Record summary
The record gives the reactivity of an RNA of 177 nucleotides to DMS and 2A3. In probing experiments dimethyl sulfate is read out at A N1 and C N3, which are open when not base-paired.
[RMDB]
RNA sequence: GGGAACGACUCGAGUAGAGUCGAAAAGAUAUGGAUAUAGACAUGAUCUGUGGUCGGAAACGACCACUAGAUCAACAGCUAUGAUCCUAAGUCAAAACUCCACGGUCAGUUCGCUGACCGUGGAGAACUAUUAGCCUUGGUUCGCCAAGGCUAAUAGAAAAGAAACAACAACAACAAC
Reactivity to DMS in 0.01 (KOAc 150mM, MgCl2 10mM, bicine 150mM(pH8.5), 24C), signal-to-noise 4, nucleotides 027 to 126: g000a030u010a280u010g000g010a010u000a010u000a010g010a070c090a270u010g010a010u000c000u000g010u000g010g000u000c000g010g000a080a070a220c010g000a010c000c000a000c000u000a010g010a000u000c010a030a080c300a170g010c010u000a010u000g000a010u000c000c000u010a060a130g000u000c020a080a080a110a150c010u000c010c000a000c000g000g000u000c000a010g000u000u010c270g010c010u000g010a010c000c000g020u000g000g000a000g000a000a060
Reactivity to 2A3 in 0.01 (KOAc 150mM, MgCl2 10mM, bicine 150mM(pH8.5), 24C), signal-to-noise 2, nucleotides 027 to 126: g020a020u090a020u160g000g010a000u020a000u020a020g090a080c090a190u140g010a010u020c000u010g000u000g000g010u010c030g010g010a070a060a030c010g000a010c010c020a000c000u020a000g000a010u000c000a000a020c010a000g010c000u000a010u140g190a050u130c000c010u020a140a030g040u030c040a000a010a100a160c000u030c000c000a000c010g030g020u010c000a020g000u050u240c230g040c200u010g000a000c050c010g010u000g000g010a010g000a000a000